[RMDB]
RNA sequence: GGGAACGACUCGAGUAGAGUCGAAAAAGACCACCUCUACGGAGGUGGUCAAGUCACGUAGCUAGUACCAGGUUGCAAUACUAGAGCGUUAGUCCUGGGGCGUACGGUGGCAGUACGCUGCCACCGAGAGUGUGGCCAGAUUCGUCUGGCCACACUCAAAAGAAACAACAACAACAAC
Reactivity to 2A3 in 0.01 (KOAc 150mM, MgCl2 10mM, bicine 150mM(pH8.5), 24C), signal-to-noise 1, nucleotides 027 to 126: a000g000a010c000c000a000c000c000u000c010u030a060c260g150g000a000g000g010u000g000g000u010c010a000a000g010u000c020a030c020g030u040a030g060c000u000a010g000u060a170c000c010a020g000g020u000u030g030c020a020a030u000a040c000u010a000g000a000g020c170g110u060u150a000g020u050c000c000u000g000g010g000g070c120g010u130a080c020g030g000u000g000g070c000a000g000u030a020c200g020c030u000g000c000c000a000c000c000g010a010
The data come from the RNA Mapping Database (RMDB), library RFM100.
Structure probing data (2A3) for a 177-nucleotide construct.
The reactions ran in a buffer of 150 mM KOAc, 10 mM MgCl2 and 150 mM bicine (pH 8.5), at 24 C.
For 2A3, 965 sequencing reads were counted.
Values cover nucleotides 27 to 126.